[RMDB]
RNA sequence: GGGAACGACUCGAGUAGAGUCGAAAAAAUCAGAGACCACUGCUGGCUGCCAUGGGAGUGAACAUGGCUUCCUAAAGAUGUUCAGCAUCCCUGCCUCAGUGGAAGGGGAAUCAGAACGUGCCUGGGGCCGACUAUUGUGAUUCGUCACAAUAGUCGGAAAAGAAACAACAACAACAAC
Reactivity to DMS in 0.01 (KOAc 150mM, MgCl2 10mM, bicine 150mM(pH8.5), 24C), signal-to-noise 2, nucleotides 027 to 126: a040a050u000c060a080g010a180g000a200c000c010a040c030u000g020c120u000g000g020c060u000g020c100c090a110u000g000g020g020a050g010u040g000a030a010c010a020u010g010g020c150u000u000c060c050u020a040a100a110g030a040u000g000u000u020c040a000g020c100a140u000c000c000c020u000g010c000c010u000c040a010g030u000g010g010a060a040g000g010g020g000a100a090u000c090a060g020a040a160c040g010u010g010c020c030u000g020g000g000g020
Reactivity to 2A3 in 0.01 (KOAc 150mM, MgCl2 10mM, bicine 150mM(pH8.5), 24C), signal-to-noise 1, nucleotides 027 to 126: a000a000u140c080a030g040a010g060a090c010c050a000c030u010g080c060u010g030g000c030u120g140c080c080a150u130g000g000g010a050g060u080g030a030a010c000a000u010g170g070c090u070u070c010c000u080a110a090a030g150a020u020g010u050u010c010a010g050c030a250u040c000c000c010u020g040c010c010u000c000a010g000u010g050g000a000a030g050g010g020g000a050a060u070c050a060g040a140a050c030g090u060g000c000c020u030g000g000g000g070